Description: Source: RMDB library M2RFPK, as collected in RNAgym. An RNA of 207 nucleotides, treated with 2A3 and read out base by base. The reactions ran in a buffer of 150 mM KOAc, 10 mM MgCl2 and 150 mM bicine (pH 8.5), at 24 C. Values cover nucleotides 27 to 156. For 2A3 the reverse transcriptase was SuperScript II with manganese.

RNA sequence: GGGAACGACUCGAGUAGAGUCGAAAAUCCACUAUGAAUCUAGUCACUAAAUAAACACAAUUAGCUACUGUGUGUAAUAGUGAGUGUUGAUAACACAAAAUAAUAGUAUAGUUUUGGAAGAGUAUACGCGCCCUUGCUCCGUUCGCGGAGCAAGGAACUCUCGAUUUGAGUUCGCUCAAAUCGAGAGAAAAGAAACAACAACAACAAC
Reactivity to 2A3 in 0.01 (KOAc 150mM, MgCl2 10mM, bicine 150mM(pH8.5), 24C), signal-to-noise 1, nucleotides 027 to 156: u000c010c010a060c080u140a120u110g110a150a060u070c080u080a090g100u040c000a000c000u040a050a010a040u040a030a040a000c000a000c000a030a180u120u020a040g070c030u100a070c060u000g000u000g000u000g000u000a000a000u000a060g000u000g000a010g010u010g020u000u130g120a150u070a130a040c050a020c040a070a140a050a020u190a020a100u030a030g040u110a060u010a130g050u040u050u240u200g020g060a060a000g000a020g070u070a040u010a130c120g010c010g060c020c000c000u000u000g070c000u000c000c020g040u010u050c100g030c000g070g010a000g030c000a000a000g000g000a000a000